[RMDB]
RNA sequence: GGGAACGACUCGAGUAGAGUCGAAAAUUCUUGUUCUCGAGGGCCUUCCUUCGUCGGUGAUCCUGCCUCUCCUUGUCGGUGAAUCCUCCCCUGGAAGGCCUCUUCCUAGGUCCGGAGUCUACUUCCAUCUGGUCUGUUCGGGCCCUCUUCGCCGGGGGUACGUAAAUAAGUUCGCUUAUUUACGUACAAAAGAAACAACAACAACAAC
Reactivity to 2A3 in 0.01 (KOAc 150mM, MgCl2 10mM, bicine 150mM(pH8.5), 24C), signal-to-noise 2, nucleotides 027 to 156: u070u020c020u030u110g040u060u010c030u030c050g050a050g000g010g050c020c000u050u020c020c000u100u130c050g120u040c040g010g000u050g030a040u060c020c000u040g020c020c000u070c040u070c040c040u060u080g100u120c050g090g030u100g080a110a050u100c000c010u060c010c020c000c030u000g040g010a010a010g020g000c020c000u010c000u020u020c020c000u030a030g000g000u000c040c010g050g000a020g040u050c050u110a080c020u170u050c050c000a080u050c040u090g000g040u020c040u050g150u050u040c010g000g000g040c000c000c000u050c020u070u090c060g050c050c010g000g000g000g000
Reactivity to DMS in 0.01 (KOAc 150mM, MgCl2 10mM, bicine 150mM(pH8.5), 24C), signal-to-noise 1, nucleotides 027 to 156: u000u000c030u020u010g020u010u000c030u000c050g010a100g040g040g020c040c040u010u010c030c020u020u000c050g030u000c050g020g020u000g000a050u010c030c000u120g010c020c010u010c040u000c060c080u000u010g020u000c060g000g010u000g000a100a150u020c040c010u010c010c010c010c020u000g030g000a080a090g020g000c040c040u040c000u000u000c030c010u000a080g000g020u000c020c020g030g010a110g010u000c040u010a100c040u000u010c030c100a140u020c070u010g040g010u000c040u020g040u000u000c080g030g030g000c000c020c020u000c020u000u000c080g060c040c030g010g000g010g000